[RMDB]
RNA sequence: GGGAACGACUCGAGUAGAGUCGAAAAGUGUGCUAUACUAGUAAGGUUCAAUGAAUCAACCCUUGGUGCUUAGCUUCUUUCACCAAGCAUAUUACACGCGGAUAACCGCCAAAGGAGAAAAGAUGAACUGCCCGACGAUUCUUCGGAAUCGUCGGAAUCAAUUCAUGUGGUUCGCCACAUGAAUUGAAAAAGAAACAACAACAACAAC
Reactivity to 2A3 in 0.01 (KOAc 150mM, MgCl2 10mM, bicine 150mM(pH8.5), 24C), signal-to-noise 4, nucleotides 027 to 156: g060u040g010u020g040c040u080a050u050a260c050u050a040g120u130a150a090g010g020u020u060c040a080a080u230g080a060a070u120c040a070a050c000c010c000u000u020g000g000u020g000c060u060u040a060g040c000u070u060c000u050u070u020c010a000c020c000a000a010g000c020a040u050a050u140u120a060c060a010c080g030c020g010g010a080u080a280a240c030c000g010c020c050a080a050a010g030g030a060g020a020a100a020a040g070a030u110g050a070a050c040u090g030c000c000c000g000a000c000g000a000u000u000c000u010u070c220g050g000a000a000u000c000g000u000c000g000g000a000a010
Reactivity to DMS in 0.01 (KOAc 150mM, MgCl2 10mM, bicine 150mM(pH8.5), 24C), signal-to-noise 2, nucleotides 027 to 156: g020u000g000u000g020c060u000a110u000a120c070u000a130g010u000a110a140g030g000u000u000c030a110a140u010g020a120a100u000c040a080a140c020c050c010u000u000g000g000u000g000c050u000u000a030g000c060u000u000c030u000u000u000c060a060c010c000a020a120g040c020a030u020a100u000u010a040c060a110c100g040c040g020g000a140u010a160a060c000c020g000c020c080a030a080a090g020g010a160g010a080a050a070a150g000a160u000g000a020a050c030u000g000c090c000c000g020a010c000g010a010u000u000c020u000u000c300g030g020a020a000u000c000g030u000c000g000g000a040a050
Description:
An RNA of 207 nucleotides, treated with 2A3 and DMS and read out base by base. For DMS the reverse transcriptase was MarathonRT.